RNA sequence: GGGAACGACUCGAGUAGAGUCGAAAAAGCACUAGGCUGUUGUCUAGACUAAGCAAGCUCUGGAAAGCAAUGCUGAGUCUCUGAGAAGAGGGAGCAUGGGGUGUGCUGAUUUAAAAACAGAAAAUGCUGUUGUUCUGACAUUCGUGUCAGAACAACAAAAAGAAACAACAACAACAAC
Reactivity to 2A3 in 0.01 (KOAc 150mM, MgCl2 10mM, bicine 150mM(pH8.5), 24C), signal-to-noise 2, nucleotides 027 to 126: a000g150c130a050c010u030a030g000g110c040u100g100u290u190g000u090c000u000a010g000a010c010u070a000a000g050c030a050a010g000c000u040c000u050g170g190a100a100a000g000c000a000a060u090g000c000u020g020a050g080u030c000u000c000u090g060a060g010a160a000g030a010g010g000g000a010g000c040a050u050g010g000g000g180u090g010u030g040c010u000g050a000u020u080u150a110a050a000a000a000c100a000g030a050a190a000a000u130g010c070
Reactivity to DMS in 0.01 (KOAc 150mM, MgCl2 10mM, bicine 150mM(pH8.5), 24C), signal-to-noise 3, nucleotides 027 to 126: a070g000c050a110c060u000a080g020g010c030u020g000u010u010g000u000c020u020a050g010a130c010u010a030a040g000c050a020a250g000c060u030c050u000g020g000a070a110a040g010c030a080a060u000g000c030u010g000a060g000u010c000u000c080u000g010a110g000a080a050g000a040g000g030g020a070g030c030a080u000g010g000g010g020u000g020u030g010c020u000g010a080u010u000u020a030a040a120a050a080c060a100g020a110a070a090a070u040g000c120
Structure probing data (2A3 and DMS) for a 177-nucleotide construct. The 2A3 profile rests on 592 reads. The reactions ran in a buffer of 150 mM KOAc, 10 mM MgCl2 and 150 mM bicine (pH 8.5), at 24 C. Values are in units of 0.01, from 0 to 300, in steps of 10.